Notes:
An RNA of 177 nucleotides, treated with DMS and 2A3 and read out base by base. The data come from the RNA Mapping Database (RMDB), library TTRDES. For 2A3 the reverse transcriptase was SuperScript II with manganese. For DMS the reverse transcriptase was MarathonRT. Conditions: 150 mM KOAc, 10 mM MgCl2 and 150 mM bicine (pH 8.5), 24 C. The DMS profile rests on 2,541 reads.
[RMDB]
RNA sequence: GGGAACGACUCGAGUAGAGUCGAAAAGAUAUGGACGGUCAGUAGGGAGCUUGAAUCGGAAACGAUUUAAAGCAUCGAUCUACUACCGUCCUAAGUCAAAAGCCCAUCCAGUUCGCUGGAUGGGCAACAGACAAUUACACUUCGGUGUAAUUGUCUGAAAAGAAACAACAACAACAAC
Reactivity to DMS in 0.01 (KOAc 150mM, MgCl2 10mM, bicine 150mM(pH8.5), 24C), signal-to-noise 2, nucleotides 027 to 126: g000a000u010a240u020g000g010a020c010g030g010u000c260a030g020u010a000g000g000g000a080g020c000u000u000g000a010a000u000c000g010g010a080a050a110c000g000a020u000u000u000a040a020a010g020c010a180u010c200g020a100u020c010u000a000c000u000a010c000c000g020u000c000c010u010a000a030g000u010c050a130a060a140a140g010c000c000c000a000u010c000c000a010g010u000u010c300g000c000u000g000g000a010u000g020g000g010c000a000a030
Reactivity to 2A3 in 0.01 (KOAc 150mM, MgCl2 10mM, bicine 150mM(pH8.5), 24C), signal-to-noise 2, nucleotides 027 to 126: g010a010u020a010u060g010g000a010c000g000g040u080c190a000g020u010a010g000g300g170a080g000c010u000u010g010a010a010u020c010g030g020a050a040a000c000g000a030u000u000u060a210a140a000g000c000a090u300c170g070a130u080c000u030a010c000u000a010c000c000g020u000c000c010u000a000a000g000u000c000a010a000a080a080g030c070c000c000a000u000c000c010a000g120u210u260c240g100c180u000g000g000a000u010g000g000g000c000a000a000